The record gives the reactivity of an RNA of 177 nucleotides to DMS and 2A3. The 2A3 profile rests on 2,846 reads. 2A3 adducts were read by reverse transcription with SuperScript II with manganese. For DMS, 3,377 sequencing reads were counted. Source: RMDB library OK2TST, as collected in RNAgym. The reactions ran in a buffer of 150 mM KOAc, 10 mM MgCl2 and 150 mM bicine (pH 8.5), at 24 C. For DMS the reverse transcriptase was MarathonRT. Reactivities are given for positions 27 through 126.
[RMDB]
RNA sequence: GGGAACGACUCGAGUAGAGUCGAAAAGAGAUCAAGGGAGUGAUAGUUCACAAGAUAGAAGCUAUAACAUACAACAUUGGGGCACAGGAGUGGUAUACUACUAUCCCUAAAUAUGUAGCCACUCAGGACGUCCCUAGUAAUUCGUUACUAGGGACGUAAAAGAAACAACAACAACAAC
Reactivity to DMS in 0.01 (KOAc 150mM, MgCl2 10mM, bicine 150mM(pH8.5), 24C), signal-to-noise 4, nucleotides 027 to 126: g030a080g010a070u000c060a100a100g030g010g010a090g020u000g000a100u000a020g010u010u000c060a110c100a080a110g010a110u000a070g000a060a070g030c060u000a050u020a060a060c080a100u000a050c120a070a080c110a070u000u000g010g000g000g020c130a060c160a050g020g000a020g010u000g010g020u020a100u000a040c020u010a100c090u000a090u000c010c010c020u010a050a060a080u010a020u010g010u000a030g010c010c000a010c010u000c010a120g010g000
Reactivity to 2A3 in 0.01 (KOAc 150mM, MgCl2 10mM, bicine 150mM(pH8.5), 24C), signal-to-noise 3, nucleotides 027 to 126: g050a010g010a010u070c050a040a050g030g030g000a060g020u040g040a060u040a050g020u070u060c040a050c050a140a050g060a100u090a090g070a040a000g050c010u030a010u040a160a020c020a060u160a070c050a110a010c010a090u050u120g010g010g020g000c030a050c010a080g070g040a010g020u010g000g030u070a160u030a300c010u000a020c020u020a040u060c000c000c000u050a050a090a020u220a040u090g020u030a000g010c010c000a000c010u010c010a000g100g030